[RMDB]
RNA sequence: GGGAACGACUCGAGUAGAGUCGAAAAAAAUAUUGAUUUGCCCCCAGUUUACCUUCUCCCUGACUGGCCAUUUGCAGACUCAGGAACUAGCCUCUGUAGGGACUUGAUUUUUCUGUUACUUUCUGGCAAUUAUUUGGCUAUUCGUAGCCAAAUAAUUAAAAGAAACAACAACAACAAC
Reactivity to DMS in 0.01 (KOAc 150mM, MgCl2 10mM, bicine 150mM(pH8.5), 24C), signal-to-noise 3, nucleotides 027 to 126: a030a030a050u020a050u030u020g000a070u010u000u000g010c040c030c010c030c050a090g000u010u000u000a080c100c010u000u010c040u000c020c030c020u010g000a060c070u010g000g000c060c050a080u010u010u010g010c060a060g020a140c110u000c050a050g020g000a080a090c090u010a070g000c050c020u000c040u010g030u000a090g000g000g000a060c050u010u010g000a080u010u020u010u020u020c040u020g000u000u010a100c190u000u000u000c010u000g010g020c300
Reactivity to 2A3 in 0.01 (KOAc 150mM, MgCl2 10mM, bicine 150mM(pH8.5), 24C), signal-to-noise 4, nucleotides 027 to 126: a000a000a010u300a080u090u130g090a130u070u040u120g030c000c000c000c000c000a030g000u080u070u100a080c030c000u070u030c030u070c010c000c000u020g050a060c000u020g040g050c030c020a120u070u060u150g000c010a010g030a090c030u010c040a010g000g020a020a020c020u000a020g030c000c010u040c030u070g070u110a040g040g010g030a020c030u050u040g030a070u060u030u060u100u030c020u040g020u010u040a060c020u040u030u000c010u010g000g000c000